[RMDB]
RNA sequence: GGGAACGACUCGAGUAGAGUCGAAAACGACGUCACCACGAUCGUGAACGCGAAUGGUUACCGUCUGUGGGGAUCGCGCACCUGUUCCGAGGACAAGCUGUGGGCGUUCGAGAACUACGUGCGCAGCGAGAGUGUAGAGCUUCGGCUCUACACUCUCAAAAGAAACAACAACAACAAC
Reactivity to DMS in 0.01 (KOAc 150mM, MgCl2 10mM, bicine 150mM(pH8.5), 24C), signal-to-noise 3, nucleotides 027 to 126: c060g000a070c120g000u000c100a030c010c000a030c060g010a130u010c120g000u000g010a150a090c040g020c090g000a070a090u000g020g010u010u010a150c140c030g010u020c010u010g060u010g010g000g000g000a100u010c160g040c000g010c030a040c030c060u010g000u010u000c020c020g010a090g000g040a080c080a070a300g030c040u000g010u020g010g020g030c090g000u020u000c030g000a180g020a020a040c020u010a090c280g010u000g000c000g000c000a090g010c110
Reactivity to 2A3 in 0.01 (KOAc 150mM, MgCl2 10mM, bicine 150mM(pH8.5), 24C), signal-to-noise 3, nucleotides 027 to 126: c020g050a010c030g020u030c020a020c060c000a020c050g070a110u070c030g040u100g180a060a030c110g030c010g150a080a080u110g060g000u030u010a060c040c070g010u000c080u150g050u080g010g010g010g020a030u090c090g000c010g000c000a010c000c010u000g030u000u020c010c040g000a050g040g050a060c070a200a080g000c020u080g050u300g210g160g020c050g010u000u040c050g020a080g000a200a010c010u040a000c030g020u000g000c020g000c010a010g040c060

Structure probing data (DMS and 2A3) for a 177-nucleotide construct.
Source: RMDB library OK2TST, as collected in RNAgym.